An RNA of 177 nucleotides, treated with DMS and 2A3 and read out base by base. The RNA was probed in 150 mM KOAc, 10 mM MgCl2 and 150 mM bicine (pH 8.5) at 24 C. DMS (dimethyl sulfate) methylates the pairing face of unpaired adenines and cytosines.
RNA sequence: GGGAACGACUCGAGUAGAGUCGAAAACAAUACGGAAACUUAUCGUUACUUGAUACGCCUACAUUCUUCUUUGGAAUGCGUAAUGGUGAAACAGUAGAAAUCGAAAUCGAUAAGGGUAAACGAUUAAGUCAUAUGUAGGCUUCGGCCUACAUAUGACAAAAGAAACAACAACAACAAC
Reactivity to DMS in 0.01 (KOAc 150mM, MgCl2 10mM, bicine 150mM(pH8.5), 24C), signal-to-noise 1, nucleotides 027 to 126: c010a080a090u000a070c100g020g000a080a190a050c020u000u000a000u010c000g000u000u000a020c070u000u000g010a170u010a070c050g010c000c000u030a130c000a010u000u000c000u040u020c300u000u000u010g020g000a000a010u000g010c150g030u010a050a130u000g000g040u010g010a060a090a100c070a080g020u000a020g000a050a090a070u030c110g000a040a070a100u010c020g000a010u000a000a030g000g000g000u000a100a050a150c020g030a160u000u000a090a110
Reactivity to 2A3 in 0.01 (KOAc 150mM, MgCl2 10mM, bicine 150mM(pH8.5), 24C), signal-to-noise 2, nucleotides 027 to 126: c030a000a040u150a150c040g030g010a090a000a070c000u000u010a020u040c010g030u040u020a020c000u080u020g040a030u040a210c020g010c000c000u010a010c030a000u000u010c010u140u010c050u130u140u280g060g010a000a030u010g010c030g120u090a120a080u130g020g000u040g040a070a060a060c000a030g120u090a010g150a000a050a000u100c080g020a140a050a010u090c010g000a000u000a030a010g040g000g050u160a120a150a030c000g010a020u050u210a090a040
It was measured as part of the RMDB library OK2TST.